Structure probing data (2A3 and DMS) for a 207-nucleotide construct. Source: RMDB library OK3TST, as collected in RNAgym. The 2A3 profile rests on 11,763 reads. DMS adducts were read by reverse transcription with MarathonRT. The RNA was probed in 150 mM KOAc, 10 mM MgCl2 and 150 mM bicine (pH 8.5) at 24 C.

RNA sequence: GGGAACGACUCGAGUAGAGUCGAAAACUCGCUCAAACAUACAGAGGUGUUGUGCGAAAUGAAUCUCUCUGCAUUAGAAUGGUCGAAGAAUCAGCGGCAAUUCGAGACCUAAUUAGAAGCCGCAUUAACAGCUUUGGAACACGCCUUGCUGACGUGAAUUAAUGAUAUAGUUCGCUAUAUCAUUAAUAAAAGAAACAACAACAACAAC
Reactivity to 2A3 in 0.01 (KOAc 150mM, MgCl2 10mM, bicine 150mM(pH8.5), 24C), signal-to-noise 8, nucleotides 027 to 156: c010u000c010g000c000u040c020a140a100a070c010a030u130a020c040a040g060a030g030g030u020g000u010u030g020u020g010c010g040a050a050a120u230g070a090a120u060c070u000c000u000c020u120g040c050a130u070u120a090g120a240a110u190g020g000u000c010g010a080a010g000a020a030u020c050a050g000c000g010g000c010a010a010u010u010c010g000a000g000a020c000c000u050a080a070u080u080a020g070a160a010g010c000c000g010c000a000u030u070a050a060c000a000g030c030u140u150u170g050g030a070a030c030a000c060g020c000c000u020u040g000c010u020g020a030c020g030u020g030a030
Reactivity to DMS in 0.01 (KOAc 150mM, MgCl2 10mM, bicine 150mM(pH8.5), 24C), signal-to-noise 6, nucleotides 027 to 156: c040u000c040g020c050u010c040a110a070a120c070a120u000a140c040a080g000a070g030g030u000g030u010u000g030u010g010c070g010a110a100a130u000g000a080a100u000c050u000c010u000c020u000g010c040a110u010u000a130g010a110a130u020g020g010u000c010g000a180a170g010a080a060u000c040a090g020c020g010g000c030a100a080u000u000c030g010a300g000a070c030c010u000a040a080u000u000a170g010a100a070g020c010c000g000c040a150u000u010a070a090c060a050g010c030u000u000u000g020g010a120a130c030a040c020g000c010c030u000u000g020c100u000g010a020c010g010u000g000a130